[RMDB]
Chemical mapping of a 177-nucleotide RNA with 2A3 and DMS.
RNA sequence: GGGAACGACUCGAGUAGAGUCGAAAAAGGAUAGGAUUCGUCCUAUCCUACACCUAAACCUCCUGGCGGUGCGGCGCCGGCCCCGCCGGGAAGGCCGCCUUAUUGGUAGCUGGUUCGCCAGCUACAAAGCUAUCUAUGUGUUCGCACAUAGAUAGCUAAAAGAAACAACAACAACAAC
Reactivity to 2A3 in 0.01 (KOAc 150mM, MgCl2 10mM, bicine 150mM(pH8.5), 24C), signal-to-noise 3, nucleotides 027 to 126: a000g000g000a000u000a000g020g000a010u020u070c200g060u030c080c000u000a000u020c000c010u000a000c010a020c010c020u060a130a090a050c010c000u000c000c000u000g000g020c000g000g040u040g040c060g070g060c080g050c070c040g040g010c010c020c000c030g000c000c000g010g000g010a010a010g010g010c020c020g080c020c030u170u210a210u090u240g130g000u000a000g000c000u000g020g050u030u020c130g030c070c010a010g000c000u000a000c000a000a000
Reactivity to DMS in 0.01 (KOAc 150mM, MgCl2 10mM, bicine 150mM(pH8.5), 24C), signal-to-noise 3, nucleotides 027 to 126: a030g010g000a010u000a020g010g000a040u010u010c160g000u000c000c000u000a000u000c000c000u000a010c170a130c010c020u000a040a120a260c010c000u000c000c010u000g000g030c010g010g000u000g020c040g000g010c060g000c090c100g000g000c010c060c060c010g000c000c010g020g020g000a010a020g020g010c100c090g010c090c080u010u010a120u010u000g000g010u000a010g010c000u000g000g010u020u010c180g000c010c010a000g000c010u000a000c000a030a070
The reactions ran in a buffer of 150 mM KOAc, 10 mM MgCl2 and 150 mM bicine (pH 8.5), at 24 C. The 2A3 profile rests on 4,292 reads. Reactivities are given for positions 27 through 126. The data come from the RNA Mapping Database (RMDB), library M2PK50. For 2A3 the reverse transcriptase was SuperScript II with manganese.